[RMDB]
RNA sequence: GGGAACGACUCGAGUAGAGUCGAAAAGUAAACAGGUUGAGUAGAGUGAGAGCCGCUGCGAUACCAGCUCGAUUACGAGCCCUUGGCAGCGCGUCGGAAGGACGGGUCCCUGAAUAUAAAAAAGUAAUUCUCUAAUUACGUUCGCGUAAUUAGAGAAAAAAGAAACAACAACAACAAC
Reactivity to DMS in 0.01 (KOAc 150mM, MgCl2 10mM, bicine 150mM(pH8.5), 24C), signal-to-noise 4, nucleotides 027 to 126: g000u000a070a060a130c070a060g010g000u000u010g010a060g010u000a060g010a130g020u000g010a110g010a100g020c070c030g010c040u010g010c010g010a090u010a070c140c140a220g000c000u000c000g000a280u000u010a110c080g010a010g000c000c080c130u000u000g010g020c030a030g000c010g010c050g010u000c020g010g010a070a050g000g010a060c040g000g000g010u000c020c010c010u000g010a050a100u000a060u040a010a030a040a040a070a120g000u010a080a120